[RMDB]
Chemical mapping of a 177-nucleotide RNA with DMS and 2A3. It was measured as part of the RMDB library OK1LIB. DMS (dimethyl sulfate) methylates the pairing face of unpaired adenines and cytosines.
RNA sequence: GGGAACGACUCGAGUAGAGUCGAAAAAUCAAAUUGUUUAUAAAUGCACGCUAGUGGCGUAUACAACAGCGUCAACGUCAAAGACUAUCGUGUGCGCGAAUGCAGCUGUCAAGUAACACGCGGAGGACGAUUACCCGAGAUUCGUCUCGGGUAAUCGAAAAGAAACAACAACAACAAC
Reactivity to DMS in 0.01 (KOAc 150mM, MgCl2 10mM, bicine 150mM(pH8.5), 24C), signal-to-noise 2, nucleotides 027 to 126: a080u070c070a040a050a160u000u000g000u040u000u040a140u050a080a100a060u040g000c020a010c020g000c000u030a000g010u000g050g010c000g000u000a090u020a070c150a090a070c150a080g010c050g030u000c100a060a070c080g000u050c060a060a120a130g010a140c000u000a010u000c050g010u050g020u010g010c010g010c040g010a090a080u010g000c030a100g040c030u010g030u010c120a070a040g000u000a080a090c070a090c060g000c030g000g000a120g000g000a220
Reactivity to 2A3 in 0.01 (KOAc 150mM, MgCl2 10mM, bicine 150mM(pH8.5), 24C), signal-to-noise 4, nucleotides 027 to 126: a010u180c110a080a050a050u140u050g040u040u110u010a210u070a050a180a080u120g000c010a010c020g000c010u010a010g090u020g070g000c030g020u030a040u030a090c120a100a060c070a090g050c000g050u060c050a010a030c030g040u020c050a180a200a030g080a070c010u020a030u120c020g000u010g040u010g040c020g020c010g060a050a050u130g020c020a040g030c010u030g050u130c030a040a070g010u090a120a020c030a020c020g090c010g000g000a020g050g060a010
For 2A3, 2,276 sequencing reads were counted. For DMS the reverse transcriptase was MarathonRT. For 2A3 the reverse transcriptase was SuperScript II with manganese.